[RMDB]
An RNA of 207 nucleotides, treated with DMS and 2A3 and read out base by base. For DMS the reverse transcriptase was MarathonRT. The reactions ran in a buffer of 150 mM KOAc, 10 mM MgCl2 and 150 mM bicine (pH 8.5), at 24 C. Reactivities are given for positions 27 through 156. The 2A3 profile rests on 2,201 reads. 2A3 is a SHAPE reagent: it acylates the 2'-hydroxyl of flexible nucleotides of all four kinds. The data come from the RNA Mapping Database (RMDB), library OK3TST.
RNA sequence: GGGAACGACUCGAGUAGAGUCGAAAAAUCUCGUGUUAUGCACGAAGUCACACUCAGUAACCAACGCCAAGUGACAUUGGCCGUAAGCACUCUUUUACCACGUCCGCUGAUUGUGGAUAUGACGGUAGACAUUUCAGAAGCUGAAGCAGAAAAGCUAUGAAAAUAGCACUUUCGAGUGCUAUUUUCAAAAAGAAACAACAACAACAAC
Reactivity to DMS in 0.01 (KOAc 150mM, MgCl2 10mM, bicine 150mM(pH8.5), 24C), signal-to-noise 2, nucleotides 027 to 156: a070u010c030u000c020g010u020g000u000u000a080u000g010c010a070c040g020a100a060g010u000c050a160c040a100c070u030c030a100g000u000a140a050c040c030a070a040c050g040c010c030a090a120g030u000g030a080c050a130u020u000g020g060c010c060g010u000a090a080g000c050a060c060u000c030u010u000u000u010a090c010c000a070c060g020u010c010c050g070c050u000g010a100u000u000g030u010g000g040a060u010a020u000g000a070c070g010g020u000a060g040a070c070a100u000u000u000c060a080g010a100a050g010c030u000g010a070a090g020c060a090g000a080a020a040a090g010c030u010a160
Reactivity to 2A3 in 0.01 (KOAc 150mM, MgCl2 10mM, bicine 150mM(pH8.5), 24C), signal-to-noise 4, nucleotides 027 to 156: a010u050c030u000c030g020u020g010u060u210a190u300g040c010a000c020g030a100a020g050u060c040a010c000a020c070u090c040a040g040u080a070a060c070c020a050a040c050g020c020c010a050a020g030u040g060a030c050a100u020u030g010g030c000c040g040u040a050a010g020c010a060c080u090c060u000u130u080u060a030c030c010a030c050g030u000c020c010g010c040u110g160a270u200u160g070u020g000g010a000u030a050u120g080a050c090g000g000u000a020g030a030c060a070u100u200u100c060a090g010a090a010g010c000u030g020a040a020g010c020a010g090a040a140a030a010g010c050u030a030